[RMDB]
RNA sequence: GGGAACGACUCGAGUAGAGUCGAAAACAAAGCGAAAUGGGGAAACUGACCAAAACAGUCGGGUUUUCCGUACCGCGAGCCUUAGUCACGAAAUUCGCAUAUGAACUGUAAGGAUGCUUUACAAACAAGAUCCGAGUAGAUUCGUCUACUCGGAUCUAAAAGAAACAACAACAACAAC
Reactivity to DMS in 0.01 (KOAc 150mM, MgCl2 10mM, bicine 150mM(pH8.5), 24C), signal-to-noise 1, nucleotides 027 to 126: c040a080a120a200g000c000g030a030a090a070u000g010g000g000g000a000a010a060c020u010g000a020c020c110a060a070a180a070c300a100g010u000c000g030g000g000u000u000u000u000c020c010g000u010a030c120c020g010c020g020a200g000c020c060u000u030a040g000u020c010a050c020g010a140a060a140u000u010c030g000c080a130u010a110u020g000a000a120c070u000g040u000a060a020g000g000a120u010g000c060u000u010u000a140c170a100a050a110c190a070
Reactivity to 2A3 in 0.01 (KOAc 150mM, MgCl2 10mM, bicine 150mM(pH8.5), 24C), signal-to-noise 1, nucleotides 027 to 126: c010a000a060a000g010c010g070a030a060a060u150g000g030g030g010a000a000a030c010u010g000a020c040c040a170a000a030a160c010a010g010u000c010g000g030g090u000u000u000u040c000c020g000u060a010c000c070g020c010g040a050g000c000c070u100u080a050g080u030c010a020c050g100a010a110a110u080u050c060g070c090a080u050a040u250g080a100a040c010u060g020u120a030a030g030g060a010u130g030c020u000u000u130a130c070a070a120a000c010a090